[RMDB]
RNA sequence: GGGAACGACUCGAGUAGAGUCGAAAACGCUGUCGUGGUGGUGGCGGUCGCGGGCGUCGUGGUAGCUGCCGGCGGGUUGGCAGUGGAACUGCAGCCGGCCAGCGGCAACGCUGCGGCAGCCAGCGCCCAACGCUCCUGCGUUCGCGCAGGAGCGUUGAAAAGAAACAACAACAACAAC
Reactivity to DMS in 0.01 (KOAc 150mM, MgCl2 10mM, bicine 150mM(pH8.5), 24C), signal-to-noise 1, nucleotides 027 to 126: c080g040c060u000g010u000c130g040u000g030g020u000g000g000u010g030g000c030g030g060u000c020g000c020g000g010g000c010g030u000c110g040u040g000g000u000a190g020c010u000g000c000c030g020g010c020g000g000g000u000u010g010g050c000a040g010u000g020g010a050a300c000u000g000c010a080g000c000c000g000g030c020c000a010g000c000g010g010c000a110a040c030g000c000u000g000c000g010g000c000a040g000c030c020a000g000c000g000c000c010
Reactivity to 2A3 in 0.01 (KOAc 150mM, MgCl2 10mM, bicine 150mM(pH8.5), 24C), signal-to-noise 1, nucleotides 027 to 126: c040g030c120u090g050u180c090g100u120g150g030u040g020g220u020g010g000c000g000g000u030c030g020c010g010g030g000c030g000u030c030g070u090g130g050u120a060g010c030u000g000c000c000g020g040c040g060g000g070u050u100g240g000c040a030g010u120g240g110a090a010c000u010g020c020a000g010c000c000g080g000c000c000a000g020c000g010g000c000a000a000c020g000c000u000g030c000g000g000c010a010g000c030c000a010g010c010g030c030c000

This 177-nucleotide RNA was probed chemically with DMS and 2A3. Values are in units of 0.01, from 0 to 300, in steps of 10. It was measured as part of the RMDB library OK2TRN. Conditions: 150 mM KOAc, 10 mM MgCl2 and 150 mM bicine (pH 8.5), 24 C. For 2A3 the reverse transcriptase was SuperScript II with manganese.